About this RNA:
This 207-nucleotide RNA was probed chemically with 2A3.

[RMDB]
RNA sequence: GGGAACGACUCGAGUAGAGUCGAAAAUUUGCGGGGAGUCCUGGGCGAGACAUGAGAAGUCUGUCUUCGCUUAGGUACGGCAAUGGUACCACACGACGCACCUUGCGUCGUUGUGUGGUUUUCGCAUGCUCCUUCCGCUGAAGGGGAGUUUCAUCCAGCAAUAUUCUACGUUCGCGUAGAAUAUUGCAAAAGAAACAACAACAACAAC
Reactivity to 2A3 in 0.01 (KOAc 150mM, MgCl2 10mM, bicine 150mM(pH8.5), 24C), signal-to-noise 1, nucleotides 027 to 156: u130u070u090g000c020g030g030g000g000a020g020u080c020c000u000g020g000g000c020g010a000g000a000c070a070u300g040a090g050a240a130g230u050c020u020g030u030c000u100u050c080g010c000u020u000a000g000g000u010a020c010g030g020c040a010a040u040g060g010u000a000c000c010a000c000a010c000g000a000c000g000c050a070c030c050u250u300g090c170g040u040c000g000u020u020g000u000g010u000g020g000u060u050u070u080c050g000c050a000u020g000c000u050c000c000u040u170c010c010g030c060u060g050a070a120g030g000g020g010a130g030u000u000u000c050a050u030c030c000a000
Background
2A3 adducts were read by reverse transcription with SuperScript II with manganese. Values are in units of 0.01, from 0 to 300, in steps of 10. It was measured as part of the RMDB library ARCHII.